[RMDB]
RNA sequence: GGGAACGACUCGAGUAGAGUCGAAAAGCUUUCCAAUUCAGCUCUUGGGAUUGCCAAUGCCCCUUAUAAAGUCUAACGGUGAGUUAUUGGAACCCAUCGCACCCUCGUGGGCUGGAUCCGGCCUGUCCGAUAAGCAACCUUUCGAGGUUGCUUAUCGAAAAGAAACAACAACAACAAC
Reactivity to 2A3 in 0.01 (KOAc 150mM, MgCl2 10mM, bicine 150mM(pH8.5), 24C), signal-to-noise 3, nucleotides 027 to 126: g020c040u010u100u030c010c000a020a050u060u080c030a010g010c010u020c040u110u060g100g010g050a170u230u210g110c020c000a000a020u030g000c020c000c030c000u050u180a140u130a190a190a100g110u050c110u110a080a000c090g030g000u080g040a240g040u120u190a040u040u040g010g010a030a030c020c030c000a020u010c040g050c020a130c010c000c030u070c080g100u090g000g030g000c020u000g020g020a050u040c040c000g000g030c010c000u020g040u040c020
Reactivity to DMS in 0.01 (KOAc 150mM, MgCl2 10mM, bicine 150mM(pH8.5), 24C), signal-to-noise 2, nucleotides 027 to 126: g030c180u000u010u010c040c060a100a100u010u010c070a060g020c020u010c040u000u010g030g000g020a060u000u010g000c000c030a030a040u000g020c030c010c010c070u000u000a070u010a080a110a170g010u010c170u010a080a100c160g020g010u000g000a100g000u000u000a050u000u000g020g000a040a080c000c000c020a050u000c080g040c100a160c040c030c020u010c080g020u000g030g000g010c010u000g010g000a050u020c070c080g010g000c030c030u010g000u000c050

Record summary: The record gives the reactivity of an RNA of 177 nucleotides to 2A3 and DMS. Conditions: 150 mM KOAc, 10 mM MgCl2 and 150 mM bicine (pH 8.5), 24 C. For 2A3 the reverse transcriptase was SuperScript II with manganese. In probing experiments dimethyl sulfate is read out at A N1 and C N3, which are open when not base-paired. Source: RMDB library OK2TST, as collected in RNAgym.